[RMDB]
The data come from the RNA Mapping Database (RMDB), library RNAMAK. Chemical mapping of a 207-nucleotide RNA with DMS and 2A3. For 2A3 the reverse transcriptase was SuperScript II with manganese. Values cover nucleotides 27 to 156. The reactions ran in a buffer of 150 mM KOAc, 10 mM MgCl2 and 150 mM bicine (pH 8.5), at 24 C.
RNA sequence: GGGAACGACUCGAGUAGAGUCGAAAAGCAUGUUUCGACAUGCAGGAAGAUAUGGAGCAACUCCCCACCGCAUACUACCCACCGAGCACGGUCGGAAACGACCGUGACUCGAGGUAUGCGAGGUUGCUCCUAAGUCACGCAGUGGGUUCGCCCACAAAAUUGAAGGUGUAUUCGUACACCUUCAAUUAAAAGAAACAACAACAACAAC
Reactivity to DMS in 0.01 (KOAc 150mM, MgCl2 10mM, bicine 150mM(pH8.5), 24C), signal-to-noise 3, nucleotides 027 to 156: g030c020a020u000g000u010u000u000c230g030a100c030a020u000g010c000a140g000g000a110a150g010a080u000a130u000g000g000a060g000c010a020a050c020u000c300c220c000c040a300c240c000g000c020a020u000a020c000u000a080c030c020c040a300c080c000g000a020g020c000a030c010g010g050u010c000g010g000a050a050a150c010g000a010c000c000g030u000g000a010c010u000c000g000a040g000g000u000a000u010g000c000g020a080g010g020u000u000g020c030u000c010c000u000a000a070g000u000c080a150c080g000c150a180g010u010g000g000g010u000u010c160g030c010c000c000a030c010a030a030
Reactivity to 2A3 in 0.01 (KOAc 150mM, MgCl2 10mM, bicine 150mM(pH8.5), 24C), signal-to-noise 5, nucleotides 027 to 156: g000c010a010u020g010u030u220u230c220g130a060c010a020u010g010c020a020g090g120a080a170g010a020u040a010u050g000g000a000g000c000a010a010c010u110c040c050c020c030a040c100c000g000c000a000u010a000c010u050a040c050c080c080a070c070c020g000a010g000c010a000c000g000g000u000c000g000g010a000a030a000c000g000a000c000c000g000u010g020a050c000u000c000g000a000g000g000u000a000u000g000c000g000a010g010g020u000u000g000c000u000c000c000u000a000a000g000u010c000a020c160g080c110a050g000u020g000g010g000u040u050c190g100c010c020c020a030c030a020a090